RNA sequence: GGGAACGACUCGAGUAGAGUCGAAAAAGGCCUGCAACUCAUUUCCCCAUUAAACAUUCUGAGAACAUCUGCACCGGUUUCCAAGGCUUCUCCCUCACUAAUUGCUUUGAUUAUUGUGUGAAGUUAAUCGUGGUAAUCCAUUCGUGGAUUACCACGAAAAAGAAACAACAACAACAAC
Reactivity to DMS in 0.01 (KOAc 150mM, MgCl2 10mM, bicine 150mM(pH8.5), 24C), signal-to-noise 1, nucleotides 027 to 126: a070g000g030c020c000u000g020c040a060a090c040u000c070a060u010u000u000c000c000c030c080a000u000u010a010a090a080c120a030u000u040c030u010g000a080g030a220a050c020a050u000c040u020g050c040a030c020c010g000g000u000u000u030c010c070a070a100g030g000c040u030u010c040u000c020c000c000u000c020a010c120u020a030a130u000u040g000c070u030u020u000g040a100u000u010a110u000u020g010u000g000u030g000a070a130g010u010u010a050a180
Reactivity to 2A3 in 0.01 (KOAc 150mM, MgCl2 10mM, bicine 150mM(pH8.5), 24C), signal-to-noise 2, nucleotides 027 to 126: a000g060g040c040c000u000g030c020a030a020c010u000c040a030u000u000u000c000c000c010c020a030u070u190a100a100a000c020a020u060u030c020u060g100a060g030a130a020c040a110u080c040u050g010c020a020c020c040g000g000u030u010u000c020c040a050a010g050g000c000u060u020c000u000c010c000c000u040c000a050c000u100a040a060u050u060g050c000u110u110u080g090a140u040u140a070u140u010g000u000g030u020g070a120a080g080u040u040a050a000
Structure probing data (DMS and 2A3) for a 177-nucleotide construct. The reactions ran in a buffer of 150 mM KOAc, 10 mM MgCl2 and 150 mM bicine (pH 8.5), at 24 C. Reactivities are given for positions 27 through 126.